The data come from the RNA Mapping Database (RMDB), library OK2TST. An RNA of 177 nucleotides, treated with 2A3 and DMS and read out base by base. 2A3 adducts were read by reverse transcription with SuperScript II with manganese. In probing experiments dimethyl sulfate is read out at A N1 and C N3, which are open when not base-paired. The reactions ran in a buffer of 150 mM KOAc, 10 mM MgCl2 and 150 mM bicine (pH 8.5), at 24 C. The DMS profile rests on 4,907 reads.
[RMDB]
RNA sequence: GGGAACGACUCGAGUAGAGUCGAAAAGCAACGGCCUCGCCGACUCCCAGAGCUUCCUGUCCGGCCGCGAGCGCUUCGGCUUCCGACUCGACGGCGAAGUCAUCACCUUGGCCGUCGCCUGGCGGAACCCAUACAUGAUCUUCGGAUCAUGUAUGGGAAAAGAAACAACAACAACAAC
Reactivity to 2A3 in 0.01 (KOAc 150mM, MgCl2 10mM, bicine 150mM(pH8.5), 24C), signal-to-noise 3, nucleotides 027 to 126: g010c020a050a130c050g030g020c000c070u070c060g010c020c020g100a120c020u020c000c000c000a020g020a020g050c020u070u040c010c020u040g080u080c030c030g030g000c000c020g010c030g050a040g060c060g010c030u060u060c030g040g000c000u030u000c010c010g030a030c030u010c030g020a010c000g010g020c030g050a010a000g030u050c040a120u130c010a080c040c000u010u010g140g000c010c000g000u010c010g020c030c070u020g020g000c000g000g030a030a030
Reactivity to DMS in 0.01 (KOAc 150mM, MgCl2 10mM, bicine 150mM(pH8.5), 24C), signal-to-noise 5, nucleotides 027 to 126: g010c080a120a100c070g000g000c020c060u010c160g010c100c020g000a110c090u000c000c010c020a130g010a090g000c040u000u000c010c020u000g000u000c060c030g020g020c040c040g020c080g000a100g000c080g000c050u000u000c060g010g010c070u000u000c030c010g000a070c070u010c030g010a020c020g000g010c000g000a030a020g010u010c110a110u010c240a100c270c000u000u000g000g020c000c000g000u000c020g010c250c100u000g000g020c010g010g010a050a100